[RMDB]
RNA sequence: GGGAACGACUCGAGUAGAGUCGAAAAAUUAGCCAGUUUGGCUUGUCCGUAGGCGGCGACGCGGUUGUAACGGCGUUCCCACUGCAAGUCGUCGAAGUGGAUGGCAGCGUGAAUCCGGUGGCCCUGGGCUUGCAUCAGGAUUCGUCCUGAUGCAAGCAAAAGAAACAACAACAACAAC
Reactivity to DMS in 0.01 (KOAc 150mM, MgCl2 10mM, bicine 150mM(pH8.5), 24C), signal-to-noise 2, nucleotides 027 to 126: a080u020u000a070g010c000c020a150g000u000u040u000g010g010c030u000u000g000u000c000c030g000u010a090g000g010c000g000g000c030g010a070c090g020c070g000g000u010u000g010u050a100a140c120g000g020c020g010u010u000c000c000c000a110c050u020g000c010a090a150g030u000c000g000u020c010g000a050a080g030u020g010g000a070u020g000g000c060a040g000c040g000u000g000a060a040u010c030c030g020g010u000g000g000c070c020c010u010g020g000
Reactivity to 2A3 in 0.01 (KOAc 150mM, MgCl2 10mM, bicine 150mM(pH8.5), 24C), signal-to-noise 3, nucleotides 027 to 126: a000u140u060a010g020c020c000a050g150u080u170u300g060g000c000u020u070g030u000c030c000g030u030a030g020g100c010g030g000c000g000a040c060g030c010g020g090u100u050g130u220a110a110c100g110g000c010g000u020u010c000c000c000a000c010u040g010c010a090a070g020u000c040g020u020c030g050a070a040g030u110g030g040a090u080g110g000c030a030g000c000g030u080g050a010a060u020c030c000g030g000u050g010g000c060c000c000u030g050g020